[RMDB]
RNA sequence: GGGAACGACUCGAGUAGAGUCGAAAACGCAUGUAACAGCCAGCAACCGAUAGCCCGCGGCCGCGACAGCCGUCCGUUUAUCGCGCCCCGCCGUUUUUGAGCUGCGCCGGUCGGAGUGCCAGUACACCUCCUUUAAUGUGUUCGCACAUUAAAGGAGAAAAGAAACAACAACAACAAC
Reactivity to DMS in 0.01 (KOAc 150mM, MgCl2 10mM, bicine 150mM(pH8.5), 24C), signal-to-noise 5, nucleotides 027 to 126: c080g010c090a050u000g010u000a080a100c100a090g010c020c040a060g010c040a090a070c060c030g010a080u000a090g010c020c030c060g020c060g010g010c070c030g010c080g000a070c080a080g000c020c030g010u010c050c030g010u000u000u000a070u010c090g010c070g000c030c040c010c040g010c040c050g020u000u010u000u000u010g020a110g020c040u000g010c060g010c050c030g020g010u000c040g010g000a070g010u010g000c010c050a080g010u010a070c150a100c150
Reactivity to 2A3 in 0.01 (KOAc 150mM, MgCl2 10mM, bicine 150mM(pH8.5), 24C), signal-to-noise 3, nucleotides 027 to 126: c020g030c040a070u100g030u110a060a070c000a040g020c030c000a000g020c020a040a060c010c000g070a090u070a060g050c010c010c010g060c020g030g000c010c020g020c030g040a030c020a030g020c000c030g030u040c000c010g010u010u070u130a120u060c020g000c010g000c080c000c010c010g010c010c020g010u030u030u030u090u180g060a060g010c010u030g020c020g000c030c040g020g020u020c010g010g040a040g010u070g050c020c010a010g000u010a020c030a040c040
An RNA of 177 nucleotides, treated with DMS and 2A3 and read out base by base.
It was measured as part of the RMDB library OK2TST.
The 2A3 profile rests on 4,243 reads.
For 2A3 the reverse transcriptase was SuperScript II with manganese.